[RMDB]
RNA sequence: GGGAACGACUCGAGUAGAGUCGAAAAUGUGUGAUUGACUUUGGACUCAAGGUUGUGGCAGUUCUGGACACAGAUAAUCGAUGCGUCCGUUACAAUAAGCAAUCAGUUUCGUACGGCGAAAGGAUACCACUCUCACUCCCUUCGGGGAGUGAGAGUGAAAAGAAACAACAACAACAAC
Reactivity to DMS in 0.01 (KOAc 150mM, MgCl2 10mM, bicine 150mM(pH8.5), 24C), signal-to-noise 1, nucleotides 027 to 126: u010g020u010g030u000g000a090u000u000g010a120c040u000u020u000g000g000a030c040u020c040a040a120g000g010u000u010g020u010g000g010c160a030g000u000u000c050u000g010g000a000c070a050c030a060g000a130u030a100a080u000c090g000a120u020g010c070g010u000c010c030g000u000u000a080c100a130a050u000a100a100g010c120a010a010u000c050a130g000u010u000u000c040g000u000a020c120g000g040c040g000a090a000a060g000g000a090u000a090c180